Background:
This 177-nucleotide RNA was probed chemically with 2A3 and DMS. The RNA was probed in 150 mM KOAc, 10 mM MgCl2 and 150 mM bicine (pH 8.5) at 24 C. DMS adducts were read by reverse transcription with MarathonRT. It was measured as part of the RMDB library OK1LIB.
[RMDB]
RNA sequence: GGGAACGACUCGAGUAGAGUCGAAAAGAAACGCUACGGCUCAGAUGGCCGGGACACCCGGUCCGUGGACCGAAAAAGGUACCCGGAGAGCGACAACCGCGGCCCGGGGAGCUCACCAGGCCUAGAAGGGUAUACUAUUCUUCGGAAUAGUAUACCCAAAAGAAACAACAACAACAAC
Reactivity to 2A3 in 0.01 (KOAc 150mM, MgCl2 10mM, bicine 150mM(pH8.5), 24C), signal-to-noise 4, nucleotides 027 to 126: g050a010a030a000c030g000c030u040a030c080g060g000c000u010c110a060g030a290u150g030g000c020c000g000g000g000a020c010a030c010c020c000g000g000u000c010c000g030u080g030g020a030c000c010g140a150a080a010a000a000g070g000u130a130c030c030c010g020g020a090g030a020g060c010g060a070c030a070a040c010c010g010c020g010g010c000c000c000g030g000g000g000a120g010c010u010c020a110c070c030a080g010g000c000c010u030a050g030a160a080
Reactivity to DMS in 0.01 (KOAc 150mM, MgCl2 10mM, bicine 150mM(pH8.5), 24C), signal-to-noise 3, nucleotides 027 to 126: g030a050a110a110c090g010c110u020a090c110g010g000c050u040c040a090g020a150u020g000g030c000c000g010g000g000a100c060a140c040c000c010g000g000u000c000c030g000u000g000g010a090c050c010g000a020a050a040a080a110g010g000u010a050c060c010c000g030g020a090g000a100g000c040g000a130c100a090a150c050c000g040c010g020g000c060c000c000g000g000g010g000a090g010c140u000c010a070c050c030a090g000g000c010c000u020a080g000a080a140